[RMDB]
RNA sequence: GGGAACGACUCGAGUAGAGUCGAAAACUUCAGGGGCACAUUGACAAAUGGGCCCGCCUUACAAUCUAGCAGCCACGUCCUAAUGAGCGGCCUUAAAACUGGUCUGGAGCCCAACCCCCAGCCCCCUACACCAGGUCAGCCUGUGGAAUUUAGAUUCCUGUACCUUUAGUUUCGACUAAAGGUACAGAAAAGAAACAACAACAACAAC
Reactivity to 2A3 in 0.01 (KOAc 150mM, MgCl2 10mM, bicine 150mM(pH8.5), 24C), signal-to-noise 2, nucleotides 027 to 156: c070u150u140c040a040g020g000g000g040c020a010c010a070u080u120g040a120c050a130a160a140u030g000g040g000c000c030c030g040c020c010u120u100a070c040a080a100u090c040u100a040g010c070a010g010c020c000a030c050g040u040c050c020u200a140a130u150g020a090g120c050g000g000c000c000u080u100a070a120a100a170c030u050g000g080u090c060u060g000g040a050g040c000c050c000a030a060c000c000c010c000c000a010g010c010c000c000c000c020u040a030c020a010c030c000a000g070g040u100c000a010g030c020c000u020g010u110g090g000a020a010u030u050u090a100g030a080u040u100c020
Reactivity to DMS in 0.01 (KOAc 150mM, MgCl2 10mM, bicine 150mM(pH8.5), 24C), signal-to-noise 1, nucleotides 027 to 156: c070u000u000c070a180g000g030g000g040c000a070c050a080u000u010g040a140c150a110a040a080u000g000g000g050c000c010c070g000c040c020u000u040a130c120a040a100u000c100u000a110g040c010a080g000c000c020a080c050g060u000c060c030u000a130a150u000g020a100g030c050g000g000c010c020u000u020a040a040a130a180c030u000g000g040u000c060u010g020g000a170g050c030c000c060a060a150c000c010c000c000c050a300g020c010c030c020c000c070u000a000c010a100c030c000a050g020g050u000c050a070g010c010c010u010g000u020g000g020a140a120u000u000u010a100g000a240u000u020c020
This 207-nucleotide RNA was probed chemically with 2A3 and DMS. For DMS, 1,512 sequencing reads were counted. The RNA was probed in 150 mM KOAc, 10 mM MgCl2 and 150 mM bicine (pH 8.5) at 24 C. Values cover nucleotides 27 to 156.